[RMDB]
RNA sequence: GGGAACGACUCGAGUAGAGUCGAAAAGGCGCGAAUCACUGAUUGGUCUAAUCCUAGUCAUUCUGUGUUCCAUGAGGCAUCCACUAAAAGCCCAGCUCGGCUACGAUCAGCCGGGUUGCUUGUGUUAAGUGUCUGUAGGUUUCGACCUGCAGGCGCUAAAAGAAACAACAACAACAAC
Reactivity to 2A3 in 0.01 (KOAc 150mM, MgCl2 10mM, bicine 150mM(pH8.5), 24C), signal-to-noise 9, nucleotides 027 to 126: g040g000c020g000c030g090a050a040u080c030a030c080u070g040a110u080u080g040g040u060c060u120a050a070u070c010c030u030a030g030u030c010a030u090u000c040u080g060u010g040u100u010c030c020a040u090g030a040g040g000c010a040u060c040c010a060c060u100a050a060a060a050g010c010c010c010a010g000c000u010c000g010g000c010u060a070c100g200a180u160c070a010g000c000c000g000g010g000u000u020g010c020u050u080g030u010g030u060u130a060
Reactivity to DMS in 0.01 (KOAc 150mM, MgCl2 10mM, bicine 150mM(pH8.5), 24C), signal-to-noise 9, nucleotides 027 to 126: g010g000c040g020c060g010a070a050u010c040a080c060u010g000a070u010u010g010g000u020c030u020a070a100u010c050c040u010a060g010u020c040a040u010u010c030u010g010u020g010u010u010c030c020a070u010g000a080g000g010c030a060u010c040c040a050c080u020a040a050a070a080g010c020c060c020a080g010c010u000c000g000g000c000u010a100c250g010a130u040c150a040g000c000c000g010g000g000u000u000g000c110u000u010g010u000g000u010u010a090

Conditions: 150 mM KOAc, 10 mM MgCl2 and 150 mM bicine (pH 8.5), 24 C. The record gives the reactivity of an RNA of 177 nucleotides to 2A3 and DMS. For DMS the reverse transcriptase was MarathonRT. 2A3 adducts were read by reverse transcription with SuperScript II with manganese. It was measured as part of the RMDB library OK1LIB.